The data come from the RNA Mapping Database (RMDB), library M2PK90. This 177-nucleotide RNA was probed chemically with DMS. Conditions: 150 mM KOAc, 10 mM MgCl2 and 150 mM bicine (pH 8.5), 24 C. Values are in units of 0.01, from 0 to 300, in steps of 10. The DMS profile rests on 1,289 reads.
RNA sequence: GGGAACGACUCGAGUAGAGUCGAAAACACAACUGCGAAGGGGGGACGCAGAAGGCUAUGUUGGCCGGGCGACGGUUGUCCCGGUUUAAGCGUGUAGGCUGGUUUUCCAGGCAAAUCCGGAAUUGAAAUAUGGUUCUUUGUUCGCAAAGAACCAUAUAAAAGAAACAACAACAACAAC
Reactivity to DMS in 0.01 (KOAc 150mM, MgCl2 10mM, bicine 150mM(pH8.5), 24C), signal-to-noise 2, nucleotides 027 to 126: c020a050c110a090a160c050u010g040c000g000a140a080g010g020g000g020g030g000a270c030g000c040a030g010a090a090g020g010c050u000a030u000g000u000u000g010g000c000c020g000g000g010c300g010a080c060g010g040u020u000g000u000c020c000c000g020g000u000u000u000a050a060g000c060g010u010g030u010a080g020g020c010u000g000g000u010u000u000u000c030c020a160g000g010c100a040a060a080u000c010c000g000g000a090a090u000u000g020a040a040